[RMDB]
RNA sequence: GGGAACGACUCGAGUAGAGUCGAAAAGUCGAAUCGGUUCUUCGUGACUUGAGCGAGGCGGCCGACAAGUGGGAGGCGCUCGUCACGCAGGCUGAAACUGUUACCUACAGCGUGGACUUGGGAGACGAUCAGGGCAUGGAUUCGUCCAUGCCCUGAUAAAAGAAACAACAACAACAAC
Reactivity to DMS in 0.01 (KOAc 150mM, MgCl2 10mM, bicine 150mM(pH8.5), 24C), signal-to-noise 2, nucleotides 027 to 126: g000u000c070g020a140a100u000c010g000g000u000u020c020u000u000c020g010u000g000a020c030u010u000g020a030g030c020g000a080g000g010c070g010g000c030c030g030a150c170a110a140g050u010g020g000g000a230g000g020c000g000c000u000c020g000u000c010a040c020g000c080a030g000g000c010u000g010a060a080a090c070u000g000u000u000a130c120c090u050a100c080a090g000c100g020u000g000g000a030c060u000u000g000g000g000a080g000a110c130g000
Reactivity to 2A3 in 0.01 (KOAc 150mM, MgCl2 10mM, bicine 150mM(pH8.5), 24C), signal-to-noise 2, nucleotides 027 to 126: g000u040c020g060a060a100u020c010g040g080u200u060c000u050u030c000g010u010g010a050c030u170u300g010a000g000c000g000a000g210g160c120g080g060c020c010g010a110c120a150a110g100u260g020g060g070a070g030g070c000g010c000u000c030g000u020c000a000c010g030c000a010g030g000c010u030g040a020a000a020c050u120g010u130u100a050c000c000u040a040c050a010g040c030g060u140g050g030a030c000u000u010g020g020g030a070g020a070c050g000